[RMDB]
RNA sequence: GGGAACGACUCGAGUAGAGUCGAAAAACGAGUCGUACGCGACUCGAAUGGUAUUGUCUGCGUAAAAGAACAAGACGUCACCGGACGCGACCGGGCUAAAAAGCGAAACGUCAUCUACGGAUGACGAAAAACGGACCUGGGUUCGCCCAGGUCCGAACGAUCAACAAUUGUUCGCAAUUGUUGAUCGAAAAGAAACAACAACAACAAC
Reactivity to 2A3 in 0.01 (KOAc 150mM, MgCl2 10mM, bicine 150mM(pH8.5), 24C), signal-to-noise 3, nucleotides 027 to 156: a000c000g000a000g000u010c020g050u050a020c210g010c000g110a000c000u000c010g000a030a070u090g040g030u100a110u050u190g030u010c020u070g050c050g110u090a080a110a070a090g070a100a060c050a080a000g030a010c010g010u050c020a010c030c010g010g000a020c000g000c000g020a010c000c000g000g030g000c050u050a020a000a000a000a000g010c000g060a100a050a030c020g000u000c000a000u000c000u010a020c170g100g000a000u000g000a010c010g010a030a040a000a000a000c000g000g000a000c000c000u010g020g000g060u040u040c150g090c050c000c000a000g000g000u010c000c000g000a000a000
Reactivity to DMS in 0.01 (KOAc 150mM, MgCl2 10mM, bicine 150mM(pH8.5), 24C), signal-to-noise 1, nucleotides 027 to 156: a130c000g000a010g040u000c000g000u020a200c170g030c020g000a030c000u000c010g050a110a100u000g070g010u010a050u000u000g020u000c050u020g000c060g000u050a130a050a080a170g020a090a140c070a090a040g000a120c050g010u000c050a140c030c000g010g000a160c110g000c110g000a140c040c010g000g000g000c120u020a010a050a070a040a130g000c020g010a130a080a140c000g000u000c000a040u000c000u040a110c290g050g000a010u000g020a000c020g010a000a000a020a170a110c020g020g020a000c000c030u010g020g000g020u000u000c230g030c000c020c000a070g000g030u000c020c000g000a000a020
Structure probing data (2A3 and DMS) for a 207-nucleotide construct. The 2A3 profile rests on 1,970 reads. For 2A3 the reverse transcriptase was SuperScript II with manganese. For DMS, 1,697 sequencing reads were counted.